[RMDB]
Annotation: The data come from the RNA Mapping Database (RMDB), library OK2TRN. An RNA of 177 nucleotides, treated with DMS and 2A3 and read out base by base. The RNA was probed in 150 mM KOAc, 10 mM MgCl2 and 150 mM bicine (pH 8.5) at 24 C. The DMS profile rests on 949 reads.
RNA sequence: GGGAACGACUCGAGUAGAGUCGAAAAAUACAUUAGUAUACACACUUUUCCUUGUUCUUCAAGCUGAAAGUAUUGACACCCAGGAACACUGAGCACAUCUAGUGAUGAGUAGGACAUUCUCUCCUACUCCACAGCUGUAGUUCGCUACAGCUGUGGAAAAAGAAACAACAACAACAAC
Reactivity to DMS in 0.01 (KOAc 150mM, MgCl2 10mM, bicine 150mM(pH8.5), 24C), signal-to-noise 2, nucleotides 027 to 126: a080u000a060c000a120u000u000a110g020u020a070u000a120c100a110c130a040c030u020u020u000u020c210c000u000u020g000u000u000c140u010u000c010a050a060g000c140u020g060a060a020a110g010u000a100u000u000g010a130c200a050c030c040c030a000g000g010a060a070c070a030c030u000g000a070g000c040a070c050a080u000c090u000a040g020u010g000a100u000g000a050g000u000a010g010g000a020c060a090u000u000c140u000c080u000c000c000u000a030c020
Reactivity to 2A3 in 0.01 (KOAc 150mM, MgCl2 10mM, bicine 150mM(pH8.5), 24C), signal-to-noise 1, nucleotides 027 to 126: a000u100a020c020a050u050u300a090g010u100a050u050a020c090a010c000a010c030u080u020u020u000c020c000u010u060g020u150u120c100u100u060c070a020a010g040c030u020g020a030a080a000g020u020a130u050u110g040a030c010a050c050c020c010a020g000g090a090a000c020a000c030u070g010a050g040c090a030c010a160u080c050u180a020g020u030g050a200u100g010a020g000u000a000g020g000a010c040a070u280u010c040u000c030u010c050c010u010a020c010